[RMDB]
RNA sequence: GGGAACGACUCGAGUAGAGUCGAAAAUUCUGGUUCGCCAGAAGUAUAUCCUAAGUCUUCUGAGCAACCGACGAAGUUGGGUCGAGUCGGAAACGACUAAGACAGCCCAACAGAGGUUGCGCUCAGAAGAUAUGGAGCCAAACUAGUUCGCUAGUAAUACAAAUUGGUGUUUCGACACCAAUUUGUAAAAAGAAACAACAACAACAAC
Reactivity to DMS in 0.01 (KOAc 150mM, MgCl2 10mM, bicine 150mM(pH8.5), 24C), signal-to-noise 2, nucleotides 027 to 156: u010u000c000u000g020g010u020u000c300g110c030c000a010g000a020a060g010u000a070u000a150u000c010c010u000a100a230g000u000c010u000u010c000u010g020a040g030c020a090a040c040c010g030a210c150g020a150a260g010u010u000g000g030g030u020c300g020a090g000u000c000g020g000a170a080a180c000g050a030c050u000a150a140g000a150c300a180g020c060c010c000a020a000c010a050g000a190g030g010u000u010g000c140g000c050u010c000a050g000a020a040g020a010u000a080u000g000g000a040g020c000c020a060a080a100c020u010a030g010u000u000c240g020c050u000a020g010u010a140a300
Reactivity to 2A3 in 0.01 (KOAc 150mM, MgCl2 10mM, bicine 150mM(pH8.5), 24C), signal-to-noise 3, nucleotides 027 to 156: u010u000c010u000g020g020u040u030c240g020c080c000a000g000a010a000g020u050a110u020a020u170c010c010u040a160a030g020u000c000u000u000c000u000g000a020g010c010a000a000c010c010g030a040c040g060a180a030g000u000u020g020g000g020u150c080g040a030g010u010c000g020g030a070a180a060c020g000a000c010u010a010a060g080a050c030a020g010c010c000c000a000a000c000a010g040a010g020g000u040u050g100c110g000c030u000c000a000g010a000a000g000a000u000a000u000g010g000a010g040c010c040a080a130a090c010u010a000g040u080u080c150g050c120u020a030g020u110a060a120
The data come from the RNA Mapping Database (RMDB), library RNAMAK. The record gives the reactivity of an RNA of 207 nucleotides to DMS and 2A3. For DMS the reverse transcriptase was MarathonRT. Reactivities are rounded to 0.1 and cut off at 0 and 3. For DMS, 3,044 sequencing reads were counted.